[RMDB]
RNA sequence: GGGAACGACUCGAGUAGAGUCGAAAAUCACUUACUCCUGGGGUCUGGGUGAGCAUCUGGCCCCGACCUGGUAAAGGGUCGGUUUCGCCCAGCAGUAAGCCCUACAUGUGGACAGAGGACGAACACCGGAAGAGCGAACGGAGACUACAUGCAACAAACGUAAAUACUGGUUCGCCAGUAUUUACGUAAAAGAAACAACAACAACAAC
Reactivity to 2A3 in 0.01 (KOAc 150mM, MgCl2 10mM, bicine 150mM(pH8.5), 24C), signal-to-noise 5, nucleotides 027 to 156: u100c010a010c030u020u080a030c020u040c030c030u040g000g000g020g060u040c020u060g010g040g000u040g030a050g040c040a080u020c060u100g040g020c010c000c000c000g000a020c000c010u040g020g120u150a110a120a120g030g000g000u010c020g030g000u050u120u070c020g000c000c000c010a000g010c000a010g020u060a060a010g000c000c000c000u050a070c070a100u150g060u060g020g010a040c050a080g050a060g020g020a030c040g020a100a030c040a030c070c040g000g030a020a030g020a020g030c010g010a010a010c030g040g010a010g010a040c020u050a030c030a050u130g070c060a100a040c030a100a210
Reactivity to DMS in 0.01 (KOAc 150mM, MgCl2 10mM, bicine 150mM(pH8.5), 24C), signal-to-noise 2, nucleotides 027 to 156: u000c100a060c070u000u010a040c030u000c040c060u000g010g040g040g040u000c030u000g030g000g000u000g000a100g060c020a140u000c030u000g050g030c030c050c000c000g040a030c060c000u000g000g000u000a030a200a170g000g000g000u000c000g010g000u010u000u020c020g010c030c000c020a110g040c090a090g060u020a080a110g040c000c060c020u020a060c050a130u000g000u000g020g000a100c070a030g000a110g010g020a090c000g010a110a070c050a140c070c000g050g010a070a040g000a070g000c050g020a060a080c090g000g000a140g020a080c010u000a090c040a100u000g010c100a060a090c040a070a160